[RMDB]
Structure probing data (2A3 and DMS) for a 177-nucleotide construct. Reactivities are rounded to 0.1 and cut off at 0 and 3. For DMS, 1,078 sequencing reads were counted. For DMS the reverse transcriptase was MarathonRT. Conditions: 150 mM KOAc, 10 mM MgCl2 and 150 mM bicine (pH 8.5), 24 C. For 2A3, 1,219 sequencing reads were counted. Values cover nucleotides 27 to 126.
RNA sequence: GGGAACGACUCGAGUAGAGUCGAAAACCCCCGUCAGCGUGUCUGGUAACACAUUAAAAUAGAAUCGUAAUCAAGCAAUCAGUCCUUUAUAUUUUCCUCCUAGUGAGUAUCUGGAAAACAGGUGCAGGUGACUAGUAUUGUUCGCAAUACUAGUCACAAAAGAAACAACAACAACAAC
Reactivity to 2A3 in 0.01 (KOAc 150mM, MgCl2 10mM, bicine 150mM(pH8.5), 24C), signal-to-noise 2, nucleotides 027 to 126: c020c030c020c020c020g060u060c040a030g030c020g050u050g000u020c010u050g040g010u080a080a000c040a010c000a060u070u170a080a100a050a040u150a090g070a050a050u070c040g030u040a050a050u070c040a010a070g040c020a030a110u000c030a030g070u010c000c010u080u220u030a170u030a060u070u080u080u070c000c020u050c000c020u030a050g050u000g110a020g000u000a050u000c010u040g020g050a000a140a030a150c020a020g000g000u010g000c030a040g260
Reactivity to DMS in 0.01 (KOAc 150mM, MgCl2 10mM, bicine 150mM(pH8.5), 24C), signal-to-noise 2, nucleotides 027 to 126: c050c030c010c110c120g000u010c050a040g010c040g010u000g020u020c060u000g010g000u010a050a050c060a050c060a070u000u000a030a060a080a110u010a100g000a090a120u000c050g000u000a090a060u000c050a110a100g020c060a100a050u000c060a050g000u000c020c020u000u000u010a030u000a040u000u000u010u000c000c030u000c050c010u000a030g010u010g000a120g030u000a010u000c020u000g000g000a110a010a090a100c030a000g000g010u000g000c040a080g010